Conditions: 150 mM KOAc, 10 mM MgCl2 and 150 mM bicine (pH 8.5), 24 C. An RNA of 207 nucleotides, treated with 2A3 and DMS and read out base by base. The 2A3 profile rests on 1,823 reads. For 2A3 the reverse transcriptase was SuperScript II with manganese.

RNA sequence: GGGAACGACUCGAGUAGAGUCGAAAAUGAAUACGAAUCUAAAUCGAAAGAAUACGAUGCAAGCGGUGCAGCGUACGCAACAAAAGUAGUUUUGAGAAACCGAGAUGGCGCUUACAUACCCGUCUUUUUGCCAGUUGAUAAAAUCGACUUAUCAAACGUACUGUUGAGUUUUCGAACUCAACAGUACAAAAGAAACAACAACAACAAC
Reactivity to 2A3 in 0.01 (KOAc 150mM, MgCl2 10mM, bicine 150mM(pH8.5), 24C), signal-to-noise 3, nucleotides 027 to 156: u080g010a060a060u120a080c060g060a020a050u040c030u130a160a050a050u100c080g070a100a070a050g090a100a040u080a110c020g020a010u040g030c010a040a040g060c030g080g040u050g000c040a020g000c000g020u030a060c040g030c030a010a120c020a040a200a080a000g040u060a030g000u000u050u070u130g140a130g040a050a030a000c050c020g030a030g020a090u030g020g000c020g000c010u010u030a020c010a070u110a010c000c020c000g030u050c060u050u070u010u080u050g070c060c010a020g000u000u020g030a020u060a070a080a020a060u070c040g040a070c020u020u040a040u080c050a020a070a020c090
Reactivity to DMS in 0.01 (KOAc 150mM, MgCl2 10mM, bicine 150mM(pH8.5), 24C), signal-to-noise 2, nucleotides 027 to 156: u000g000a160a070u010a110c040g020a120a160u000c030u000a050a070a160u000c070g020a120a150a150g000a170a100u000a050c040g020a000u000g000c030a050a230g070c090g020g040u010g020c040a080g000c020g030u000a030c060g000c090a050a120c040a040a090a050a100g020u000a090g000u000u020u000u000g050a180g000a070a090a110c030c020g010a070g010a090u000g000g010c030g070c020u000u000a100c150a080u000a090c040c030c040g010u010c020u030u000u000u000u000g010c050c070a120g060u000u030g010a080u000a050a040a090a300u000c090g040a140c040u000u000a100u000c060a050a090a100c160